[RMDB]
RNA sequence: GGGAACGACUCGAGUAGAGUCGAAAAAGUUUUCCAUCCAGAAACAAGUAACGCUGAGUUGCCUAGGAUUCUGGUGAAUCACAACACAAAAACCAUGCAUGUGAUAGACUCAUAUGGAUCAAAAACCGUUAAAGCUUUUGUUCGCAAAAGCUUUAACAAAAGAAACAACAACAACAAC
Reactivity to DMS in 0.01 (KOAc 150mM, MgCl2 10mM, bicine 150mM(pH8.5), 24C), signal-to-noise 2, nucleotides 027 to 126: a100g020u000u000u010u020c010c000a110u020c000c000a000g000a000a010a040c050a150a150g000u000a010a010c000g050c300u080g010a120g030u000u000g000c000c020u000a150g000g020a090u000u000c000u000g000g070u010g000a140a050u000c060a040c160a060a090c120a140c270a010a130a080a100a080c080c110a020u010g010c060a020u040g010u000g000a010u000a110g010a090c160u000c040a040u000a040u010g000g000a060u000c130a060a000a130a020a110c100c120
Reactivity to 2A3 in 0.01 (KOAc 150mM, MgCl2 10mM, bicine 150mM(pH8.5), 24C), signal-to-noise 5, nucleotides 027 to 126: a000g030u080u000u020u000c020c000a040u050c000c010a020g010a010a060a030c020a000a050g020u020a020a010c020g040c180u240g160a030g060u000u010g000c000c020u090a060g040g090a140u020u010c010u010g000g010u020g030a010a040u070c040a020c060a150a080c040a050c050a150a070a110a110a040c070c010a060u140g060c030a030u050g060u010g020a040u040a110g110a050c010u010c070a020u080a060u150g070g020a030u160c120a040a060a090a030a040c030c030